This 177-nucleotide RNA was probed chemically with 2A3 and DMS. DMS adducts were read by reverse transcription with MarathonRT. Values are in units of 0.01, from 0 to 300, in steps of 10. The 2A3 profile rests on 5,951 reads. The reactions ran in a buffer of 150 mM KOAc, 10 mM MgCl2 and 150 mM bicine (pH 8.5), at 24 C.

RNA sequence: GGGAACGACUCGAGUAGAGUCGAAAAGAUAUGGACAGUGGACAUGUUACAGCUCGGAAACGAGCUGAAUAACAACAGCCACGUCCUAAGUCAAAGAGUACUUGUAUGUUCGCAUACAAGUACUCAAGACUUCAAGACUGUUCGCAGUCUUGAAGUCAAAAGAAACAACAACAACAAC
Reactivity to 2A3 in 0.01 (KOAc 150mM, MgCl2 10mM, bicine 150mM(pH8.5), 24C), signal-to-noise 3, nucleotides 027 to 126: g000a020u080a060u110g000g020a050c160a150g030u010g010g030a060c090a210u080g000u000u040a000c000a010g000c010u010c010g010g000a050a070a050c000g000a000g030c010u010g010a000a020u050a000a000c060a010a020c030a040g050c010c000a010c000g000u000c000c000u020a130a010g050u000c060a080a070a080g010a010g000u010a010c000u010u000g010u010a000u000g020u030u160c300g020c160a000u000a010c000a000a000g000u000a000c000u010c000a000a000
Reactivity to DMS in 0.01 (KOAc 150mM, MgCl2 10mM, bicine 150mM(pH8.5), 24C), signal-to-noise 3, nucleotides 027 to 126: g010a060u000a260u000g040g010a020c010a080g030u000g000g010a060c130a160u000g000u000u000a040c020a000g010c000u010c010g010g000a070a050a180c000g000a020g000c000u010g000a060a070u000a020a000c110a040a100c300a160g020c010c000a010c000g000u000c000c000u000a020a050g010u000c020a080a040a200g000a010g000u000a000c000u000u000g000u010a000u000g000u010u010c190g020c000a010u000a000c000a000a020g000u000a000c000u010c000a010a080